Source information: The record gives the reactivity of an RNA of 177 nucleotides to DMS. For DMS, 1,046 sequencing reads were counted.

RNA sequence: GGGAACGACUCGAGUAGAGUCGAAAACUGAGGCGAUGGCCCGUCAUGGGAUGACCCGGCUCUAUGCAGCCCUCCAUCUUCCCCCUGAAGUGCUAUUACCCCCUGGUACAUAUCACACCACUUCAUAGGUAAUGUCUUGGUUCGCCAAGACAUUACCAAAAGAAACAACAACAACAAC
Reactivity to DMS in 0.01 (KOAc 150mM, MgCl2 10mM, bicine 150mM(pH8.5), 24C), signal-to-noise 1, nucleotides 027 to 126: c000u000g010a070g030g030c050g000a070u000g010g020c020c050c040g000u000c170a060u000g000g000g020a180u000g000a120c030c070c120g000g000c020u000c060u010a060u010g000c050a050g010c000c030c030u000c020c020a070u000c020u000u010c000c000c000c050c060u000g000a060a060g000u000g000c080u010a050u000u010a270c030c010c030c080c120u000g000g000u000a040c090a070u000a040u000c130a080c030a130c100c030a030c150u000u000c000a100u000a190